[RMDB]
RNA sequence: GGGAACGACUCGAGUAGAGUCGAAAAUCUUUGAUGUAGCCCAGCGCAUCCAGUAAUGAGGUAGUUGCGUCAUAAGGCACUUCAUAGAAUGCGCUAUGCGGUGCGGUAUCGACUUCCGGGUUAUAGAUCGAUCCGUUUUAUUCGUAAAACGGAUCGAAAAAGAAACAACAACAACAAC
Reactivity to DMS in 0.01 (KOAc 150mM, MgCl2 10mM, bicine 150mM(pH8.5), 24C), signal-to-noise 2, nucleotides 027 to 126: u000c030u000u010u010g050a080u010g010u020a090g000c000c050c050a110g010c020g000c010a070u000c040c030a130g030u000a100a070u000g010a080g010g020u000a020g010u000u000g020c090g010u000c180a070u010a110a170g020g010c020a000c020u000u000c020a010u000a040g000a100a030u010g030c110g010c000u000a030u010g000c080g000g030u000g000c050g000g000u000a050u010c020g000a040c000u000u000c050c060g000g020g000u000u000a110u000a080g000a140
Reactivity to 2A3 in 0.01 (KOAc 150mM, MgCl2 10mM, bicine 150mM(pH8.5), 24C), signal-to-noise 2, nucleotides 027 to 126: u080c020u050u090u180g100a060u030g050u050a020g030c000c030c000a000g020c010g020c000a010u000c000c000a040g060u110a200a130u130g040a020g040g100u090a080g060u160u070g070c060g030u050c040a110u110a160a030g120g000c000a000c020u000u000c000a000u000a030g050a130a050u130g050c060g010c040u020a060u050g010c030g000g060u020g000c020g050g000u080a130u060c020g030a040c020u120u040c020c030g030g040g000u120u000a140u060a080g080a050